[RMDB]
RNA sequence: GGGAACGACUCGAGUAGAGUCGAAAAGUUGCUGCAUCCUGUUCUUUCCUGAUGUUAUACCCUUCGUACUUGAAGCCAUUGCAGUGUGAGCAAUAACGUCAAUGAUCUUGGGGGUCGAUUGUAAGUACGAAAACAGUGCAUUCGUGCACUGUUUUCGAAAAGAAACAACAACAACAAC
Reactivity to DMS in 0.01 (KOAc 150mM, MgCl2 10mM, bicine 150mM(pH8.5), 24C), signal-to-noise 2, nucleotides 027 to 126: g010u010u000g010c030u000g010c020a050u000c030c000u000g040u000u010c060u010u000u000c040c010u020g010a080u000g010u000u000a080u010a160c060c050c030u010u000c110g010u000a080c080u010u010g020a060a060g010c060c080a050u000u010g010c010a090g000u000g000u010g010a100g000c040a080a040u020a050a040c070g010u000c030a050a050u010g000a050u010c040u000u010g030g010g010g020g020u010c070g010a090u000u000g000u000a070a090g020u000a090